Source: RMDB library VIROID, as collected in RNAgym. Chemical mapping of a 177-nucleotide RNA with DMS. The reactions ran in a buffer of 150 mM KOAc, 10 mM MgCl2 and 150 mM bicine (pH 8.5), at 24 C. DMS adducts were read by reverse transcription with MarathonRT.

RNA sequence: GGGAACGACUCGAGUAGAGUCGAAAAAGGCCCUGUCCGCCGCUGCGCUGCCACCUACUCUUCGCGCCGCUAGUCGAGCGGACUCCGGGUGUAGCCCCCUGUUCUCUCACGCUCUUUUUCUUUGACGCCGGUUAUAAAAGUUCGCUUUUAUAACCGGAAAAGAAACAACAACAACAAC
Reactivity to DMS in 0.01 (KOAc 150mM, MgCl2 10mM, bicine 150mM(pH8.5), 24C), signal-to-noise 1, nucleotides 027 to 126: a120g040g020c010c010c000u000g010u000c040c010g020c050c080g050c040u010g040c030g040c070u010g030c050c110a140c100c090u020a090c120u000c090u000u000c190g020c110g010c250c020g000c020u000a060g020u020c050g000a130g020c030g010g000a050c000u020c170c150g010g000g010u000g010u010a100g030c040c020c000c020c030u000g000u000u010c000u000c000u000c070a100c100g000c040u030c020u010u000u030u010u000c010u010u000u000g000a240c240g010